[RMDB]
RNA sequence: GGGAACGACUCGAGUAGAGUCGAAAAUUGGUAUCAAUAACCGUGACUUACGUGAUUUGUCUAUCGACCUUAAUCGCACUCGCGAACUGGCACCGCGCCUGCCCGAGGGCGUGACGGUUAUCAGCGAUACCAAGUAAACCUUCGGGUUUACUUGGUAAAAAGAAACAACAACAACAAC
Reactivity to 2A3 in 0.01 (KOAc 150mM, MgCl2 10mM, bicine 150mM(pH8.5), 24C), signal-to-noise 4, nucleotides 027 to 126: u110u070g050g020u080a040u160c050a040a060u060a030a000c020c010g010u020g030a040c080u110u190a040c070g050u020g090a120u080u070u120g040u010c030u070a200u130c130g000a050c020c020u100u170a060a050u060c030g010c020a040c060u070c090g040c020g030a110a120c070u030g010g000c010a030c050c080g060c030g020c010c010u020g040c020c010c010g050a070g000g030g000c010g010u000g010a000c000g000g010u000u020a050u070c060a020g060c020g060a020
Reactivity to DMS in 0.01 (KOAc 150mM, MgCl2 10mM, bicine 150mM(pH8.5), 24C), signal-to-noise 5, nucleotides 027 to 126: u030u010g010g010u010a050u000c110a130a050u010a010a060c030c020g020u010g000a080c140u020u000a060c070g010u000g010a090u010u020u000g000u000c030u010a120u030c160g000a090c030c160u010u000a060a070u000c020g020c020a150c220u020c120g010c040g000a020a130c080u000g000g000c020a080c120c080g000c060g020c000c000u000g000c060c020c020g020a130g010g000g010c050g020u000g010a030c040g000g010u010u000a030u000c120a120g010c130g000a070
Structure probing data (2A3 and DMS) for a 177-nucleotide construct.
DMS adducts were read by reverse transcription with MarathonRT.
The data come from the RNA Mapping Database (RMDB), library OK2TST.
Conditions: 150 mM KOAc, 10 mM MgCl2 and 150 mM bicine (pH 8.5), 24 C.